[RMDB]
Source: RMDB library OK3TST, as collected in RNAgym. An RNA of 207 nucleotides, treated with 2A3 and read out base by base. For 2A3, 323 sequencing reads were counted. The RNA was probed in 150 mM KOAc, 10 mM MgCl2 and 150 mM bicine (pH 8.5) at 24 C.
RNA sequence: GGGAACGACUCGAGUAGAGUCGAAAACUGCAAGCUAGAUGUGUAGGCUAUGGAUUGCCAUCCUAAUUGGGACACUUUUGAGAGCAGAAGUAGGUGUUAUCCAUUAUGUUGGGACAAUAGGUGUAAAUUGGUACCAUCUUGGGUACAUCCAAGGUACGAAUCACUACCCGUUCGCGGGUAGUGAUUCAAAAGAAACAACAACAACAAC
Reactivity to 2A3 in 0.01 (KOAc 150mM, MgCl2 10mM, bicine 150mM(pH8.5), 24C), signal-to-noise 1, nucleotides 027 to 156: c030u120g010c060a200a070g000c060u150a050g060a140u030g140u030g000u090a040g050g000c020u190a070u180g010g010a110u140u020g090c010c050a010u100c000c050u190a200a120u140u140g000g060g000a040c010a020c080u050u010u010u180g070a170g000a070g000c000a010g010a060a000g040u040a040g000g000u100g000u060u000a160u000c000c010a000u000u050a130u180g140u130u010g000g000g000a000c000a070a040u020a020g180g000u170g000u050a040a160a040u030u060g030g000u070a000c000c000a040u060c000u040u040g060g010g000u050a060c010a010u060c000c000a000a000g060g000u090a030c130